[RMDB]
RNA sequence: GGGAACGACUCGAGUAGAGUCGAAAAGUUCUCGAAGGAAGGGUGUCGACGCGCGAAUGACACCACGUCAUCCAUUUUUUUUAACGAGAGCAUGUAGAUGUAGGAUGAGUUUUUUUUCUCAUCCGAAGGGUAGGUUCUAGUUCGCUAGGACCUACCCAAAAGAAACAACAACAACAAC
Reactivity to DMS in 0.01 (KOAc 150mM, MgCl2 10mM, bicine 150mM(pH8.5), 24C), signal-to-noise 6, nucleotides 027 to 126: g000u000u000c000u000c000g000a150a200g000g000a050a050g000g020g020u010g020u010c110g000a080c110g010c080g020c090g010a110a130u020g000a050c070a070c050c020a050c050g000u000c090a070u000c080c020a030u010u010u010u050u050u030u030u020a080a230c040g010a010g000a030g000c010a100u020g020u020a080g000a070u010g000u000a140g010g020a000u000g010a000g010u010u000u010u010u020u000u020u030c010u010c000a000u000c000c000g000a060a110
Reactivity to 2A3 in 0.01 (KOAc 150mM, MgCl2 10mM, bicine 150mM(pH8.5), 24C), signal-to-noise 7, nucleotides 027 to 126: g010u000u010c000u010c000g020a120a060g060g010a010a050g060g000g000u010g010u030c020g040a090c060g080c020g030c070g130a160a080u170g010a010c010a000c010c010a050c010g060u010c020a060u020c000c010a030u070u050u030u010u010u020u060u240a080a030c020g000a000g000a010g030c040a030u090g060u190a090g030a200u120g040u080a030g010g000a000u000g010a000g000u000u010u030u010u000u010u100u120c000u000c010a010u000c000c000g000a000a000

Conditions: 150 mM KOAc, 10 mM MgCl2 and 150 mM bicine (pH 8.5), 24 C.
Chemical mapping of a 177-nucleotide RNA with DMS and 2A3.
2A3 adducts were read by reverse transcription with SuperScript II with manganese.
It was measured as part of the RMDB library OK1LIB.